[RMDB]
RNA sequence: GGGAACGACUCGAGUAGAGUCGAAAACGAGCCUGGCACAGCGCGGCGCGCUGGAGCGCCAGAUCUUCGAGCACGCCUUCGCCUCCCGCCUCAAGUACCUCCACGCCGGCAUGGAGACGCCGUUAUGGCACCAGGUUACGUUCGCGUGACCUGGUGCAAAAGAAACAACAACAACAAC
Reactivity to DMS in 0.01 (KOAc 150mM, MgCl2 10mM, bicine 150mM(pH8.5), 24C), signal-to-noise 3, nucleotides 027 to 126: c070g010a020g000c140c010u000g000g070c030a090c070a030g020c010g030c120g010g000c140g010c010g030c020u010g000g000a140g020c180g000c000c010a010g000a110u030c050u000u020c010g000a110g010c110a100c070g010c010c020u010u000c090g040c070c000u000c010c020c010g000c030c010u010c050a080a050g000u000a080c060c020u000c060c000a050c070g050c020c040g000g010c010a110u000g000g000a090g000a040c120g000c020c010g010u010u010a050u040g000
Reactivity to 2A3 in 0.01 (KOAc 150mM, MgCl2 10mM, bicine 150mM(pH8.5), 24C), signal-to-noise 6, nucleotides 027 to 126: c030g010a010g050c000c000u010g030g000c010a010c000a040g000c010g020c030g270g070c120g020c000g000c070u050g040g020a050g110c080g020c000c000a020g010a070u030c030u060u070c050g040a030g030c020a020c060g020c000c000u010u070c020g020c000c010u020c000c000c000g020c010c000u050c020a070a040g020u030a080c000c000u010c010c010a040c030g020c020c010g040g000c020a040u050g050g020a050g010a030c040g000c010c010g020u030u080a070u040g070